[RMDB]
RNA sequence: GGGAACGACUCGAGUAGAGUCGAAAAAUUUUCGAUAUUUACUCACAAAUGGAAUUCAAGGGGAACAACUUCGGUCUCAGCACUUUAAUUAUUCUUCUCGUUCCCACCUAAUUUCGCAAUUUAUUGUGCUCUUAUAUAGAUUCGUCUAUAUAAGAGCAAAAGAAACAACAACAACAAC
Reactivity to 2A3 in 0.01 (KOAc 150mM, MgCl2 10mM, bicine 150mM(pH8.5), 24C), signal-to-noise 9, nucleotides 027 to 126: a000u120u090u000u000c020g000a030u070a300u180u010u000a010c000u000c020a030c050a060a150a100u200g050g010a020a020u080u050c040a060a040g040g010g010g020a050a050c020a050a050c100u130u140c120g090g010u000c030u010c060a060g080c070a040c050u060u050u070a050a040u060u090a070u090u040c030u080u040c020u010c030g010u000u020c020c000c000a030c000c010u100a110a140u060u140u140c080g020c080a040a100u040u130u090a170u130u230g060u040
Reactivity to DMS in 0.01 (KOAc 150mM, MgCl2 10mM, bicine 150mM(pH8.5), 24C), signal-to-noise 2, nucleotides 027 to 126: a090u010u000u040u020c000g030a010u000a050u010u000u000a020c000u020c010a130c210a070a070a110u010g010g000a040a050u010u010c130a060a110g010g000g030g020a080a030c090a040a070c140u000u000c140g010g030u000c050u000c110a070g030c110a030c040u000u010u010a070a070u010u010a060u000u000c040u000u010c110u000c000g050u000u000c000c000c010a110c140c180u000a050a040u010u010u010c050g010c100a050a040u000u010u000a090u030u010g010u000
The record gives the reactivity of an RNA of 177 nucleotides to 2A3 and DMS. Source: RMDB libraries RFM100 and RFMREP, as collected in RNAgym. Conditions: 150 mM KOAc, 10 mM MgCl2 and 150 mM bicine (pH 8.5), 24 C. DMS adducts were read by reverse transcription with MarathonRT.